RNA sequence: GGGAACGACUCGAGUAGAGUCGAAAACUCAGAAACUAAGACAGUAGCCAACACAGAACCAAAUACCCUUUGGGGAUUGAGGGAAGUGGAGCGGGAGAAUGAGCGGCACUCCCUCCCUUUACAUAGGAUAGUAUCCGUCUUUCGAGACGGAUACUAUAAAAGAAACAACAACAACAAC
Reactivity to 2A3 in 0.01 (KOAc 150mM, MgCl2 10mM, bicine 150mM(pH8.5), 24C), signal-to-noise 1, nucleotides 027 to 126: c050u050c010a050g170a060a040a020c060u090a060a060g060a050c020a040g080u120a020g010c020c000a050a000c060a010c010a050g100a090a050c040c000a040a000a050u160a100c000c000c000u060u050u120g030g000g000g000a000u110u130g030a090g020g030g040a080a020g000u050g080g020a000g000c040g030g040g050a090g030a200a170u160g010a080g010c030g040g030c000a010c000u000c010c020c000u030c010c010c000u090u110u010a120c170a050u070a030g140g000
Reactivity to DMS in 0.01 (KOAc 150mM, MgCl2 10mM, bicine 150mM(pH8.5), 24C), signal-to-noise 2, nucleotides 027 to 126: c000u000c020a210g020a120a070a080c100u000a080a060g020a070c090a070g010u000a090g000c040c010a090a110c040a040c120a060g000a190a190c040c010a030a070a080u000a130c040c050c030u000u030u000g030g010g000g000a190u000u000g000a110g000g000g040a050a070g040u000g000g000a040g020c080g000g010g020a100g000a110a070u010g000a060g000c000g020g000c010a080c010u000c000c020c010u000c020c000c000u000u010u040a070c220a110u000a080g000g000